Description:
An RNA of 177 nucleotides, treated with DMS and 2A3 and read out base by base. For DMS, 4,106 sequencing reads were counted. DMS adducts were read by reverse transcription with MarathonRT. Reactivities are given for positions 27 through 126. The data come from the RNA Mapping Database (RMDB), library OK2TRN. 2A3 adducts were read by reverse transcription with SuperScript II with manganese. Values are in units of 0.01, from 0 to 300, in steps of 10.
RNA sequence: GGGAACGACUCGAGUAGAGUCGAAAAGACACGACGGAGACGUCGUGUCAAAGAGUGGGAAACCACUCAAAGAGCCACAGCUUCGGCUGUGGCUCAAGGCGCGACACCGUGCGCGGAACAGACGGAACGUAAAUGACUGAUUCGUCAGUCAUUUACGAAAAGAAACAACAACAACAAC
Reactivity to DMS in 0.01 (KOAc 150mM, MgCl2 10mM, bicine 150mM(pH8.5), 24C), signal-to-noise 4, nucleotides 027 to 126: g000a020c010a010c000g000a020c010g000g010a300g000a220c010g020u000c010g030u010g000u010c000a020a060a080g000a020g020u000g000g010g000a170a140a230c000c000a000c000u000c000a040a080a100g000a020g000c010c000a010c010a020g010c000u000u020c250g030g010c010u010g020u000g000g020c000u000c000a010a040g000g010c020g020c010g000a120c090a200c050c050g010u000g010c020g000c010g010g000a060a050c160a040g000a070c080g020g010a130a210
Reactivity to 2A3 in 0.01 (KOAc 150mM, MgCl2 10mM, bicine 150mM(pH8.5), 24C), signal-to-noise 3, nucleotides 027 to 126: g000a000c000a000c010g010a000c000g040g000a050g030a060c020g000u000c000g000u010g000u000c000a010a000a010g000a000g000u010g000g020g030a010a060a070c000c000a000c000u010c000a040a040a000g010a000g020c000c000a000c000a010g020c000u090u120c260g120g000c000u010g000u000g010g000c010u000c010a000a000g000g000c010g000c020g020a030c020a040c080c030g040u080g030c010g000c020g040g090a070a040c040a040g110a060c030g040g010a130a030